This 177-nucleotide RNA was probed chemically with DMS and 2A3.
RNA sequence: GGGAACGACUCGAGUAGAGUCGAAAAGAUAUGGACCUGUUAAGGGAGACGAGUACUCGGAAACGAGUACCGUCAUCGAUCUUACAGGUCCUAAGUCAAAAUCACUAGCCGUUCGCGGCUAGUGAAACAGAGGUACAGAGUUCGCUCUGUACCUCUGAAAAGAAACAACAACAACAAC
Reactivity to DMS in 0.01 (KOAc 150mM, MgCl2 10mM, bicine 150mM(pH8.5), 24C), signal-to-noise 2, nucleotides 027 to 126: g000a010u000a180u010g020g000a010c020c000u010g010u010u000a020a000g010g020g020a110g010a000c000g000a140g000u000a000c000u010c020g020g010a010a060a090c010g020a010g020u010a000c000c000g000u000c000a100u010c300g020a120u020c010u020u010a020c000a020g010g000u000c010c000u000a010a050g010u010c010a130a140a090a130u010c010a000c010u000a010g000c000c010g010u010u020c300g020c040g000g000c010u010a000g010u000g000a000a050a140
Reactivity to 2A3 in 0.01 (KOAc 150mM, MgCl2 10mM, bicine 150mM(pH8.5), 24C), signal-to-noise 2, nucleotides 027 to 126: g010a010u020a000u040g000g000a010c010c000u060g060u230u260a050a030g080g130g040a300g000a070c010g040a100g150u000a000c000u000c010g030g000a030a000a000c000g000a010g000u010a010c000c000g030u000c000a000u160c030g080a100u020c000u020u000a020c000a000g050g000u000c000c000u000a000a000g010u000c010a000a030a010a290u020c010a010c000u000a000g000c030c000g060u080u050c300g000c030g200g040c000u000a000g000u000g000a000a000a000

The DMS profile rests on 2,097 reads. For 2A3, 3,910 sequencing reads were counted. It was measured as part of the RMDB library TTRDES.